Conditions: 150 mM KOAc, 10 mM MgCl2 and 150 mM bicine (pH 8.5), 24 C.
This 207-nucleotide RNA was probed chemically with 2A3.
For 2A3, 1,530 sequencing reads were counted.
Source: RMDB library RNAMAK, as collected in RNAgym.
RNA sequence: GGGAACGACUCGAGUAGAGUCGAAAAUCCUAAGUCUGUCUGUAAACCAUUUGAGGUGCUGGGAGCUUCGGAAACGAAGCGAAGAACAGCACUACCCACCAAAUGGGAAGAAGGACAGAUAUGGAAAAAGCUAUCGAGUGUUCGCACUCGAUAGCAAGUUACAGCAACACUUCGGUGUUGCUGUAACAAAAGAAACAACAACAACAAC
Reactivity to 2A3 in 0.01 (KOAc 150mM, MgCl2 10mM, bicine 150mM(pH8.5), 24C), signal-to-noise 1, nucleotides 027 to 156: u030c020c010u030a070a020g050u030c010u010g000u000c060u090g000u000a010a000a010c020c010a000u000u000u000g020a020g000g010u000g000c000u000g000g000g020a030g010c000u000u010c010g050g020a110a080a090c000g000a000a020g000c030g050a080a020g040a010a000c010a000g000c020a000c000u010a000c030c080c020a070c000c010a010a010a000u000g000g010g000a030a060g010a010a000g000g000a000c000a000g010a000u020a050u040g020g000a080a080a030a050a030g010c000u000a000u000c000g000a000g000u030g010u120u140c210g170c110a000c000u000c010g000a000u000a000g000c020a020a000